[RMDB]
RNA sequence: GGGAACGACUCGAGUAGAGUCGAAAAGAUAUGGAUUAGGGUAGAUUUGUGUCGGAAACGACACUGAUCUAUAAUCCUACUGUCCUAAGUCAAAACCACAACAUUUCCUUCGGGAAAUGUUGUGGAACUUGACAUUAAGCUUCGGCUUAAUGUCAAGAAAAGAAACAACAACAACAAC
Reactivity to DMS in 0.01 (KOAc 150mM, MgCl2 10mM, bicine 150mM(pH8.5), 24C), signal-to-noise 3, nucleotides 027 to 126: g000a110u000a110u010g000g010a000u020u000a180g000g050g050u000a010g000a000u000u000u000g030u000g030u000c000g020g000a090a080a250c000g010a000c000a000c020u000g000a000u000c000u000a050u000a110a030u000c000c000u000a040c240u000g020u000c000c010u000a070a120g010u020c120a040a040a130a120c000c000a010c000a000a000c000a000u000u000u000c000c000u000u010c260g030g010g010a000a000a000u000g000u000u000g000u000g010g000a000a030
Reactivity to 2A3 in 0.01 (KOAc 150mM, MgCl2 10mM, bicine 150mM(pH8.5), 24C), signal-to-noise 3, nucleotides 027 to 126: g030a050u150a070u210g020g000a010u030u060a090g210g110g140u030a010g000a030u000u010u050g000u010g000u000c010g000g030a060a060a050c010g000a000c000a000c010u010g000a010u000c000u000a060u040a020a040u060c010c000u010a080c040u040g050u010c010c020u060a160a050g120u070c060a030a040a060a160c010c010a000c000a010a000c000a000u000u000u020c000c000u060u100c300g050g000g000a000a000a010u010g020u000u010g000u000g000g000a000a010